[RMDB]
RNA sequence: GGGAACGACUCGAGUAGAGUCGAAAAUACGAGUCAGAGUGGAACGCGGCGCUCAUCGAGGAGUACGGAGAAGGGGGCUCUGGGUUCUCCCACGGACGUUUCGCGAGCCUGAGGAUGUGCGAGCAGAGAACUAUAUGGUCUUCGGACCAUAUAGUUCAAAAGAAACAACAACAACAAC
Reactivity to 2A3 in 0.01 (KOAc 150mM, MgCl2 10mM, bicine 150mM(pH8.5), 24C), signal-to-noise 1, nucleotides 027 to 126: u120a020c040g000a010g070u030c030a040g050a040g140u100g000g030a150a020c050g000c040g090g000c000g000c000u040c030a130u150c080g020a030g010g000a020g020u060a030c020g040g060a040g040a090a140g050g030g020g030g020c000u020c030u000g170g000g020u160u030c030u050c000c000c000a020c030g030g000a020c040g000u100u240u180c050g030c020g000a010g000c000c040u070g030a060g050g030a050u080g020u070g020c020g010a040g000c050a020g050a020
Reactivity to DMS in 0.01 (KOAc 150mM, MgCl2 10mM, bicine 150mM(pH8.5), 24C), signal-to-noise 4, nucleotides 027 to 126: u010a070c090g010a180g000u000c040a060g000a130g020u010g000g010a090a100c090g020c050g000g020c040g000c060u010c050a050u000c050g010a150g010g000a050g020u020a050c060g010g000a050g010a110a110g000g010g000g000g000c020u000c030u000g020g000g010u010u000c070u000c000c020c020a180c120g010g000a040c090g000u000u010u000c040g010c040g000a100g020c030c030u000g010a100g000g010a070u000g000u000g020c060g000a080g000c090a100g010a170